[RMDB]
RNA sequence: GGGAACGACUCGAGUAGAGUCGAAAACCCCCCGAUCCGGGACCGCCGGGCUCCCCGCGCUCUAGGGCAGGCGGAGAGGGAAGCGGCCGAACAGCUCGAGGCUGGGGGCUCGCGGGCGCGGCCGCGUAACGGACAAUAGAUUCGUCUAUUGUCCGUUAAAAGAAACAACAACAACAAC
Reactivity to 2A3 in 0.01 (KOAc 150mM, MgCl2 10mM, bicine 150mM(pH8.5), 24C), signal-to-noise 6, nucleotides 027 to 126: c000c000c000c000c000c000g010a030u030c010c000g010g020g130a130c020c000g050c010c010g010g010g000c000u040c010c000c010c010g140c020g020c090u070c110u240a120g030g020g000c020a010g020g050c020g020g010a040g030a020g030g040g000a070a040g070c020g030g020c010c000g020a100a070c060a060g010c000u020c030g040a020g050g010c030u070g050g000g000g030g010c010u010c000g040c010g000g020g010c010g020c000g000g010c000c010g010c010g010u020
Reactivity to DMS in 0.01 (KOAc 150mM, MgCl2 10mM, bicine 150mM(pH8.5), 24C), signal-to-noise 3, nucleotides 027 to 126: c000c000c020c020c010c000g010a270u000c010c000g000g000g010a300c070c030g010c010c010g000g000g010c000u000c020c010c020c000g030c190g000c080u000c150u040a110g010g000g010c010a130g000g010c030g000g000a020g000a300g010g010g000a080a050g030c000g000g020c000c000g000a120a120c100a200g020c010u000c010g000a100g000g000c030u000g010g000g020g000g020c000u020c030g020c030g000g000g020c000g030c030g000g000c030c010g040c020g020u020